Structure probing data (2A3) for a 177-nucleotide construct. For 2A3, 649 sequencing reads were counted.
RNA sequence: GGGAACGACUCGAGUAGAGUCGAAAACAAUUGGCUUAUAGCUCUAGUGCAAAUGGCAGCCUGGUUGGCACAACUUUGCAGGGCAAGCCUAUUGGUAUGUUCUUCCCUUAUGACAUCGAACUUGUCACCUUCGAUUGGACUUCGGUCCAAUCGAAGGAAAAGAAACAACAACAACAAC
Reactivity to 2A3 in 0.01 (KOAc 150mM, MgCl2 10mM, bicine 150mM(pH8.5), 24C), signal-to-noise 1, nucleotides 027 to 126: c000a000a010u000u000g000g020c000u090u040a100u080a290g010c000u000c010u130a140g160u030g060c020a000a020a020u140g000g060c050a000g020c000c030u080g300g000u140u260g030g000c000a010c000a030a150c040u040u030u030g060c000a050g000g000g030c000a000a000g010c000c000u000a010u030u000g000g030u130a100u180g010u020u110c020u050u040c000c000c030u000u080a110u080g010a000c010a000u070c100g030a060a070c070u030u030g010u030c030a060
2A3 adducts were read by reverse transcription with SuperScript II with manganese.